[RMDB]
RNA sequence: GGGAACGACUCGAGUAGAGUCGAAAAGUAAAGGCCGAACGAGCGCUAAUGCGCAUGCUAGAAAAUGGUAGGCCAUCGUAGUCUGAGCAUGAGCACGAAAGAAACACACACAUGCACGUGCAAAAAAUGACAGUAAAUGAUUCGUCAUUUACUGUCAAAAAGAAACAACAACAACAAC
Reactivity to DMS in 0.01 (KOAc 150mM, MgCl2 10mM, bicine 150mM(pH8.5), 24C), signal-to-noise 7, nucleotides 027 to 126: g010u000a060a110a130g020g010c010c010g010a120a120c170g000a070g020c030g020c030u010a110a100u010g020c020g010c010a050u010g010c020u000a050g000a040a050a080a060u010g010g020u010a100g000g010c060c040a050u000c090g010u000a080g010u000c020u000g010a070g000c020a030u000g000a070g010c010a020c030g000a050a050a100g010a070a060a070c110a060c110a060c070a070c100a060u010g000c050a060c080g020u000g010c050a010a010a040a070a090a070
Reactivity to 2A3 in 0.01 (KOAc 150mM, MgCl2 10mM, bicine 150mM(pH8.5), 24C), signal-to-noise 3, nucleotides 027 to 126: g030u050a030a120a010g030g010c030c020g020a050a030c050g030a050g010c030g000c100u170a220a100u220g000c020g000c020a020u100g020c020u050a050g100a080a160a050a030u110g040g000u020a030g000g030c000c010a000u020c010g020u020a050g060u000c080u080g100a010g020c020a040u040g050a000g000c020a010c020g040a060a070a060g120a030a130a000c070a010c010a010c000a010c000a060u070g020c030a020c070g030u040g010c060a010a040a010a000a000a120

This 177-nucleotide RNA was probed chemically with DMS and 2A3.
For DMS the reverse transcriptase was MarathonRT.
For 2A3 the reverse transcriptase was SuperScript II with manganese.